The record gives the reactivity of an RNA of 177 nucleotides to DMS. The reactions ran in a buffer of 150 mM KOAc, 10 mM MgCl2 and 150 mM bicine (pH 8.5), at 24 C.
RNA sequence: GGGAACGACUCGAGUAGAGUCGAAAAGAUAUGGAGCCCCAUCCUGUGAUCACGCGAUAAGAUUGUACUCGGAAACGAGUACAACAAGAUCUUUUGACGCGUGCGUACAGGAUGGGGCUCCUAAGUCGGAACUAAAUUACUUCGGUAAUUUAGUUCCAAAAGAAACAACAACAACAAC
Reactivity to DMS in 0.01 (KOAc 150mM, MgCl2 10mM, bicine 150mM(pH8.5), 24C), signal-to-noise 1, nucleotides 027 to 126: g010a130u000a300u000g000g010a030g000c010c000c000c020a000u020c000c000u010g020u000g000a050u010c010a000c000g020c000g090a170u000a040a040g000a060u010u000g000u010a000c010u010c000g000g000a140a110a190c010g000a030g020u000a000c000a110a070c300a150a130g020a020u010c000u010u000u000u040g020a180c070g010c010g000u010g000c210g010u020a030c010a010g010g020a010u000g010g010g000g030c010u000c010c000u000a000a070g020u020c120